An RNA of 177 nucleotides, treated with DMS and 2A3 and read out base by base. For DMS the reverse transcriptase was MarathonRT. For 2A3 the reverse transcriptase was SuperScript II with manganese. The data come from the RNA Mapping Database (RMDB), library OK2TST. For DMS, 764 sequencing reads were counted.
RNA sequence: GGGAACGACUCGAGUAGAGUCGAAAAUGGCCAGGGUAUGAGGGACUCAAAGGCCAAUUCAAGAACAGGCUAGAUCGGCUCGAGGCCACCUGCGCCCGGUAUAACAUCAAGCUGCAACCAGCUAGCCUGAGACAGUGGGAUUCGUCCCACUGUCUCAAAAAGAAACAACAACAACAAC
Reactivity to DMS in 0.01 (KOAc 150mM, MgCl2 10mM, bicine 150mM(pH8.5), 24C), signal-to-noise 2, nucleotides 027 to 126: u000g040g040c040c010a220g010g070g020u000a060u000g040a050g000g000g070a160c000u010c030a010a120a160g030g020c020c010a060a060u010u000c140a100a120g000a090a170c180a040g020g000c030u000a050g010a100u040c050g010g000c060u000c020g010a090g030g010c060c060a090c040c040u010g010c100g010c010c020c060g020g020u020a070u000a050a060c090a060u020c060a000a040g020c020u000g010c120a140a120c210c000a090g000c040u000a030g010c040c020
Reactivity to 2A3 in 0.01 (KOAc 150mM, MgCl2 10mM, bicine 150mM(pH8.5), 24C), signal-to-noise 2, nucleotides 027 to 126: u040g010g000c030c010a020g000g040g040u080a150u280g180a140g040g080g030a030c000u020c050a110a140a060g010g000c010c020a020a000u100u100c020a060a010g060a160a060c050a050g010g000c000u020a020g010a130u100c020g030g000c000u010c070g010a140g020g000c020c000a060c010c070u080g030c000g010c040c000c030g000g030u140a100u050a130a070c080a060u110c050a070a040g030c000u080g070c070a100a080c070c010a000g000c020u000a020g000c000c010